An RNA of 177 nucleotides, treated with DMS and read out base by base.
Reactivities are given for positions 27 through 126.
Conditions: 150 mM KOAc, 10 mM MgCl2 and 150 mM bicine (pH 8.5), 24 C.
Source: RMDB library OK1LIB, as collected in RNAgym.
RNA sequence: GGGAACGACUCGAGUAGAGUCGAAAAGAAAAGGCGGUUUCAGGUUUACGCCGUAGCCUGGUUUGACUGGUUGAUGGAAACUACGUUUCAUCGUUUGUAGGUUUCAGUCGUUUAAAUAAAUAAAGAAGGGUUUUCAUUAGUUCGCUAAUGAAAACCCAAAAGAAACAACAACAACAAC
Reactivity to DMS in 0.01 (KOAc 150mM, MgCl2 10mM, bicine 150mM(pH8.5), 24C), signal-to-noise 1, nucleotides 027 to 126: g010a060a090a070a070g000g000c010g000g080u020u060u090c090a130g000g000u000u010u110a010c090g030c040c020g030u000a040g000c050c000u000g000g040u030u020u020g030a010c000u010g000g020u020u000g000a010u000g000g000a040a020a030c050u010a170c190g000u000u000u000c030a050u000c080g020u040u080u000g010u010a100g030g010u020u000u000c070a070g020u000c020g020u000u000u070a040a070a150u040a060a040a120u000a130a110a100g010a130a090